[RMDB]
RNA sequence: GGGAACGACUCGAGUAGAGUCGAAAAGAUCGUUCAUCUCUCCAAUUAAUCCGACUUUGACAACCGGGAUGGACCUCUUACAGGUGGGAGAGACGGAAGUAAGGAUAAUCCUGAAGGAACGCGCCCAUGAAGUCCGCCGGGUUCGCCCGGCGGACAACCAUUACAGAAACUUCGGUUUCUGUAAUGGAAAAGAAACAACAACAACAAC
Reactivity to 2A3 in 0.01 (KOAc 150mM, MgCl2 10mM, bicine 150mM(pH8.5), 24C), signal-to-noise 1, nucleotides 027 to 156: g020a060u180c000g000u000u000c030a080u040c020u000c000u000c010c000a120a250u130u140a060a020u070c020c010g100a140c140u090u240u260g020a030c060a090a040c040c030g050g020g000a020u080g040g020a020c000c010u100c040u070u220a050c110a060g000g000u090g030g030g000a040g000a000g060a030c020g030g100a040a010g050u010a040a000g020g000a050u050a110a040u220c000c000u000g010a010a040g050g010a000a000c000g000c000g050c000c000c010a020u070g130a110a050g000u010c000c000g000c030c000g080g070g000u060u050c030g000c020c010c020g010g020c010g020g010a000c000a000a000
Structure probing data (2A3) for a 207-nucleotide construct. The reactions ran in a buffer of 150 mM KOAc, 10 mM MgCl2 and 150 mM bicine (pH 8.5), at 24 C.